[RMDB]
RNA sequence: GGGAACGACUCGAGUAGAGUCGAAAAUUCGAGCAUGAGCCAAGUCCGAGCGAAGAGAACGCGUUGGGAAAGAUCAGUGACCGAGAGGGGUCAAUGGUAAAGAGGCGAAGUAUCCCGGAGAGAUACUCUCCUAAGAGGGGGAAGAGAAUCCAAGAGACAUCUACUAAUGGUUCGCCAUUAGUAGAUGAAAAGAAACAACAACAACAAC
Reactivity to DMS in 0.01 (KOAc 150mM, MgCl2 10mM, bicine 150mM(pH8.5), 24C), signal-to-noise 3, nucleotides 027 to 156: u010u000c030g000a090g020c040a130u000g010a130g020c000c020a050a170g030u010c040c030g020a130g050c060g020a030a110g000a170g000a050a130c040g020c100g020u020u000g010g020g030a100a060a080g000a030u000c020a090g040u000g030a100c020c010g000a190g020a160g030g000g020g010u000c060a000a040u020g010g020u000a090a050a140g020a080g040g010c030g000a090a090g020u000a080u000c010c000c020g020g010a110g020a110g000a110u000a060c010u000c010u000c010c030u000a030a100g010a130g010g000g020g040g020a030a070g010a090g000a130a100u000c020c020a050a090g000a290g000a180
Reactivity to 2A3 in 0.01 (KOAc 150mM, MgCl2 10mM, bicine 150mM(pH8.5), 24C), signal-to-noise 7, nucleotides 027 to 156: u060u040c020g010a020g010c040a060u070g030a020g040c020c010a070a020g050u000c020c020g020a030g010c020g030a070a030g050a030g010a110a030c040g030c050g040u070u110g040g000g020a050a090a030g050a040u060c020a020g050u030g060a030c020c040g050a040g050a030g140g090g000g000u020c000a030a050u060g010g000u060a070a070a020g050a040g020g010c040g030a050a030g020u030a050u050c020c010c030g010g030a070g000a000g000a020u080a130c020u020c010u000c020c000u070a110a020g030a090g050g020g010g010g000a020a020g020a000g020a040a020u030c050c020a070a020g020a010g020a070
This 207-nucleotide RNA was probed chemically with DMS and 2A3. For 2A3, 9,044 sequencing reads were counted. Conditions: 150 mM KOAc, 10 mM MgCl2 and 150 mM bicine (pH 8.5), 24 C. Source: RMDB library VIROID, as collected in RNAgym. DMS adducts were read by reverse transcription with MarathonRT.